[RMDB]
RNA sequence: GGGAACGACUCGAGUAGAGUCGAAAAGGGUACAUUCAAGGUUGUGGCUGUAAUAAGAUAAAAGAUUGCCUAGGUAAGGGUAGAUGUUAUCUCAAUGACAUAAAAUACUCCUUCAGUCACAGGCAAGACGUAUGACAUGUUUCGACAUGUCAUACGUAAAAGAAACAACAACAACAAC
Reactivity to 2A3 in 0.01 (KOAc 150mM, MgCl2 10mM, bicine 150mM(pH8.5), 24C), signal-to-noise 3, nucleotides 027 to 126: g030g000g010u060a050c050a070u040u190c100a110a090g090g020u020u010g030u030g030g000c030u000g020u030a070a040u110a110a060g100a060u130a170a100a010a000g110a100u060u030g000c020c000u030a060g000g110u140a020a020g030g000g010u020a020g020a070u020g010u010u020a040u010c110u000c110a070a070u070g010a000c000a030u080a040a270a060a020u050a020c110u160c020c020u020u010c010a070g070u120c020a030c030a080g020g000c010a000a000g070
Reactivity to DMS in 0.01 (KOAc 150mM, MgCl2 10mM, bicine 150mM(pH8.5), 24C), signal-to-noise 4, nucleotides 027 to 126: g000g010g030u000a060c090a060u000u000c110a060a140g020g020u010u010g030u000g000g010c010u000g020u000a050a070u000a050a080g010a080u000a060a060a070a080g010a110u000u000g010c000c010u000a090g010g000u020a040a060g010g000g010u000a010g010a100u000g000u000u000a020u000c240u020c240a080a090u000g010a020c010a010u010a050a050a170a140u000a050c050u030c000c010u000u000c080a070g000u000c150a060c110a050g000g000c060a040a070g010